[RMDB]
RNA sequence: GGGAACGACUCGAGUAGAGUCGAAAACGUAUCUUGAUAGGUACACCGGGAGCAUGGUCUGCUCCAAGCAGCUCUAUAAGGAAGCCUUGAACCAUGCCUUUGACGAGCCGAAGCAAUGGGAAAUCCGCUGGGAUUACGGCUUCGGCCGUAAUCCCAGAAAAGAAACAACAACAACAAC
Reactivity to 2A3 in 0.01 (KOAc 150mM, MgCl2 10mM, bicine 150mM(pH8.5), 24C), signal-to-noise 2, nucleotides 027 to 126: c070g000u030a000u020c000u050u110g140a090u250a230g020g010u030a000c000a020c000c000g000g000g010a010g000c000a030u090g070g040u160c110u040g010c000u020c020c010a000a050g020c000a010g000c000u070c020u060a190u080a180a030g130g000a010a130g040c020c050u070u150g050a040a030c000c000a010u090g020c000c000u100u040u040g090a070c120g080a030g010c050c010g090a050a000g000c030a000a080u080g040g030g100a020a110a030u020c010c000g030
Reactivity to DMS in 0.01 (KOAc 150mM, MgCl2 10mM, bicine 150mM(pH8.5), 24C), signal-to-noise 1, nucleotides 027 to 126: c120g060u010a020u010c000u000u020g080a180u040a040g000g010u000a040c000a170c050c020g000g000g000a020g000c020a100u020g000g050u000c090u000g000c000u000c030c000a110a060g000c030a250g000c020u000c000u020a220u020a030a000g000g000a070a130g000c010c060u030u000g000a270a000c170c060a050u050g000c130c070u000u000u030g010a140c170g000a030g000c000c020g000a160a070g020c030a100a050u050g010g000g010a000a110a050u000c000c030g010